[RMDB]
An RNA of 177 nucleotides, treated with DMS and 2A3 and read out base by base. Reactivities are given for positions 27 through 126. 2A3 adducts were read by reverse transcription with SuperScript II with manganese. DMS adducts were read by reverse transcription with MarathonRT.
RNA sequence: GGGAACGACUCGAGUAGAGUCGAAAACGAUAGCACACUGGGCGUAGAACUUGUCGGCUUCCUCCGAGCCCACCGGCAAAUAGGAGACCAGCACGUCGACCUUGGCCUCCUUGAGCGCCUGGACGACGGCUUCUAAGUGCUUCGGCACUUAGAAGCCAAAAGAAACAACAACAACAAC
Reactivity to DMS in 0.01 (KOAc 150mM, MgCl2 10mM, bicine 150mM(pH8.5), 24C), signal-to-noise 3, nucleotides 027 to 126: c080g000a080u030a050g010c120a080c100a060c060u010g010g010g030c000g020u020a100g000a130a060c110u010u000g000u000c000g000g010c140u000u000c010c010u020c030c030g020a140g000c080c050c000a180c050c060g000g020c010a030a080a070u000a030g010g010a050g030a030c030c000a000g000c250a060c150g030u030c060g010a100c080c020u010u010g000g000c030c010u030c010c060u010u000g000a150g000c080g000c000c010u020g040g010a060c140g020a140c120
Reactivity to 2A3 in 0.01 (KOAc 150mM, MgCl2 10mM, bicine 150mM(pH8.5), 24C), signal-to-noise 6, nucleotides 027 to 126: c020g070a090u130a080g050c070a020c010a010c120u040g030g030g000c030g020u030a030g030a140a070c060u040u050g020u040c020g020g020c030u100u030c020c020u030c030c050g060a020g040c000c000c010a020c020c000g000g000c030a050a070a030u100a040g030g000a020g020a030c000c010a000g050c050a010c110g120u070c050g060a130c030c020u070u110g000g000c010c000u020c010c000u030u100g040a040g030c080g000c000c010u030g010g020a010c030g010a010c070